[RMDB]
The record gives the reactivity of an RNA of 177 nucleotides to DMS and 2A3. The RNA was probed in 150 mM KOAc, 10 mM MgCl2 and 150 mM bicine (pH 8.5) at 24 C. 2A3 adducts were read by reverse transcription with SuperScript II with manganese. The 2A3 profile rests on 47,637 reads. The data come from the RNA Mapping Database (RMDB), library OK2TST.
RNA sequence: GGGAACGACUCGAGUAGAGUCGAAAAGCGCAGCCUCGGUGCGGAUGCGUUCGACGUACCGGCCGGGCGCCUCGCCGACCUCGUCGCUGAACACCCGAGUGAAAUGACGCGGGCUCAUGGCCGCACGGGACUAUAUCAAUUUCGAUUGAUAUAGUCCAAAAGAAACAACAACAACAAC
Reactivity to DMS in 0.01 (KOAc 150mM, MgCl2 10mM, bicine 150mM(pH8.5), 24C), signal-to-noise 9, nucleotides 027 to 126: g010c040g020c080a110g000c070c030u000c030g010g010u000g020c070g020g000a090u010g020c020g010u000u010c100g010a070c020g020u000a060c100c050g000g000c020c010g010g000g010c070g010c030c030u000c040g010c010c020g000a100c100c010u000c070g010u000c040g010c020u010g000a100a110c180a130c020c010c010g000a090g010u000g010a090a100a110u010g000a070c080g010c040g000g000g000c060u010c120a090u010g010g010c030c030g020c070a070c140g010
Reactivity to 2A3 in 0.01 (KOAc 150mM, MgCl2 10mM, bicine 150mM(pH8.5), 24C), signal-to-noise 9, nucleotides 027 to 126: g020c030g000c030a030g010c010c010u040c030g030g040u190g230c060g040g020a120u090g010c010g020u060u190c100g110a090c020g020u050a060c020c020g010g000c010c000g000g000g010c040g000c000c000u020c030g000c010c010g030a060c010c000u020c040g070u050c020g000c040u040g050a080a010c020a060c040c020c010g010a040g050u110g110a120a160a200u200g030a040c070g010c010g050g020g000c020u060c060a120u170g080g010c020c010g020c040a020c050g060

The DMS profile rests on 35,675 reads. High 2A3 reactivity points to a flexible backbone, as in loops and unpaired stretches. For DMS the reverse transcriptase was MarathonRT.